[RMDB]
RNA sequence: GGGAACGACUCGAGUAGAGUCGAAAAUCCAUACAUAAACUAGAUUUUUUGGCCACCCAACCCCGGAUCGCUGGACACGAAAUAGUUUGUGAGCACUCCGGGUAGCACAUAUAUCACUCUUCACGAUUACUCUACUCAUGUUCGCAUGAGUAGAGUAAAAAGAAACAACAACAACAAC
Reactivity to 2A3 in 0.01 (KOAc 150mM, MgCl2 10mM, bicine 150mM(pH8.5), 24C), signal-to-noise 6, nucleotides 027 to 126: u000c000c000a040u130a110c030a080u240a090a140a060c060u080a080g070a280u070u060u030u030u050u120g010g020c020c020a040c010c010c000a040a030c010c000c010c030g000g000a020u030c050g020c030u040g060g070a020c000a000c020g100a070a060a060u150a050g140u070u050u090g040u040g010a010g010c020a020c050u020c010c000g000g000g000u000a010g010c020a030c010a040u150a010u040a020u070c000a030c030u030c000u080u060c040a020c050g030a040u020
Reactivity to DMS in 0.01 (KOAc 150mM, MgCl2 10mM, bicine 150mM(pH8.5), 24C), signal-to-noise 1, nucleotides 027 to 126: u030c010c010a120u050a080c140a040u000a130a060a090c070u010a030g000a050u000u030u000u020u040u010g000g000c030c050a070c010c030c040a060a180c120c010c010c000g000g000a030u000c080g010c000u000g000g020a210c010a000c020g010a010a140a140u020a120g060u000u000u000g000u000g000a020g040c000a070c120u000c000c000g000g000g030u000a010g030c060a120c060a050u020a090u020a040u020c000a010c060u000c040u010u000c010a060c090g010a190u040